[RMDB]
RNA sequence: GGGAACGACUCGAGUAGAGUCGAAAACAGCUUGGCAAAAUUCAGGUUCCAGGGCCCUGCCAUGGAGCGUGCCAGGUGAGGCCUCGCCUCCUAGAUUAGCUGUGGCAGUGCGGCUGUGGCUCGGACUUUGAGCGGCCCGCUCCCCCACAGUCCCUGGGUAAUUACACCGGUUCGCCGGUGUAAUUACAAAAGAAACAACAACAACAAC
Reactivity to 2A3 in 0.01 (KOAc 150mM, MgCl2 10mM, bicine 150mM(pH8.5), 24C), signal-to-noise 1, nucleotides 027 to 156: c000a000g000c010u080u130g010g030c130a140a090a040a300u150u060c040a130g010g000u140u000c000c000a000g030g000g050c000c030c060u100g000c030c000a040u060g010g030a000g030c060g040u040g020c000c000a050g090g030u180g090a040g040g070c060c050u130c060g010c010c010u050c040c030u130a100g060a240u120u090a030g010c010u010g010u000g070g000c000a000g050u030g080c050g030g010c000u040g050u180g220g010c000u000c050g170g010a300c140u240u090u300g060a020g000c030g010g020c000c000c010g030c000u040c010c030c010c000c010a040c000a000g140u170c020c000c000u050g010g000
This 207-nucleotide RNA was probed chemically with 2A3. The RNA was probed in 150 mM KOAc, 10 mM MgCl2 and 150 mM bicine (pH 8.5) at 24 C. For 2A3 the reverse transcriptase was SuperScript II with manganese. It was measured as part of the RMDB library OK3TST.